[RMDB]
RNA sequence: GGGAACGACUCGAGUAGAGUCGAAAAUAGGUCCUGGCGUCGCUUAGGGAGCCACUGCUUCAGAUAUUUGUUGAGGGUAUCUGAGGGACUUUUACUCAACUCCGUUCGUUGGUCCACAUGUUCGUGUGAGGGCCAGAACCUAAGAAACUACUUCACGGUUAGCAUAUACGUUCGCGUAUAUGCUAACAAAAGAAACAACAACAACAAC
Reactivity to 2A3 in 0.01 (KOAc 150mM, MgCl2 10mM, bicine 150mM(pH8.5), 24C), signal-to-noise 7, nucleotides 027 to 156: u180a010g060g010u040c010c010u010g040g010c050g150u120c070g030c120u110u180a120g010g070g010a030g020c020c020a060c080u100g000c000u010u000c000a000g000a010u010a020u020u100u150g010u010u000g000a000g000g000g000u000a000u000c010u000g000a010g010g000g010a020c010u140u180u130u130a110c000u010c000a000a010c000u030c040c030g010u020u010c020g030u040u050g020g010u020c020c010a030c020a100u110g080u300u170c100g020u060g020u020g120a130g000g010g000c000c000a000g000a000a000c000c000u030a050a020g060a090a070a010c080u180a060c040u100u130c070a030c080g040
Reactivity to DMS in 0.01 (KOAc 150mM, MgCl2 10mM, bicine 150mM(pH8.5), 24C), signal-to-noise 1, nucleotides 027 to 156: u000a080g040g000u000c020c030u000g010g000c020g000u000c060g060c100u000u000a090g030g020g000a130g010c020c090a110c080u010g000c020u000u010c000a000g010a030u000a010u010u010u010g050u000u000g000a220g030g000g040u010a010u000c010u010g000a020g020g020g000a090c040u000u000u000u000a130c040u000c040a060a050c020u000c010c010g020u000u000c040g030u000u000g050g050u000c000c030a090c030a110u000g010u000u000c180g000u000g070u010g000a080g000g040g040c040c020a070g010a020a030c020c040u000a060a170g010a160a090a040c060u000a090c050u000u000c040a120c110g020